RNA sequence: GGGAACGACUCGAGUAGAGUCGAAAACUCCCCUCAAAAUCGUUUCAGUCCAAAAUUGAUUCGGCGGCCCUGUCAUGAGGCCGAAACGAAGGCACGUACCCCUUCGAAUGGCGUCGGGGAGUAAGCGAAAGCACUGACCCUUUCGAGGGUCAGUGAAUACGGGAAGAAUAUUCGUAUUCUUCCCGUAAAAAGAAACAACAACAACAAC
Reactivity to DMS in 0.01 (KOAc 150mM, MgCl2 10mM, bicine 150mM(pH8.5), 24C), signal-to-noise 1, nucleotides 027 to 156: c000u000c000c010c010c050u010c050a050a010a070a070u000c030g000u010u010u010c030a130g070u000c090c100a080a050a180a180u000u000g020a070u000u000c060g040g010c010g020g000c040c020c040u000g030u000c180a140u010g020a090g020g030c000c010g040a020a030a120c030g020a040a050g010g000c060a110c060g000u020a100c040c020c020c000u010u000c010g020a160a150u010g010g010c070g010u010c130g000g000g000g000a060g020u000a100a130g040c010g000a070a100a140g000c040a020c000u000g000a020c000c010c000u000u010u000c260g010a050g010g010g020u020c000a000g000u010g000a050a110
Reactivity to 2A3 in 0.01 (KOAc 150mM, MgCl2 10mM, bicine 150mM(pH8.5), 24C), signal-to-noise 2, nucleotides 027 to 156: c000u000c010c030c000c010u140c070a150a240a090a150u090c010g040u020u020u060c030a050g020u040c060c070a050a120a180a240u140u020g020a060u030u040c000g050g000c050g000g000c020c010c000u070g000u070c050a050u050g030a040g040g050c040c000g040a000a000a000c000g000a010a010g010g040c060a000c170g180u200a080c000c000c000c050u000u000c010g070a050a090u040g030g010c060g000u100c060g030g010g000g000a000g010u020a000a040g030c080g040a170a030a000g040c000a000c010u010g000a000c010c010c000u010u090u020c150g090a000g000g030g020u000c000a000g000u000g000a000a000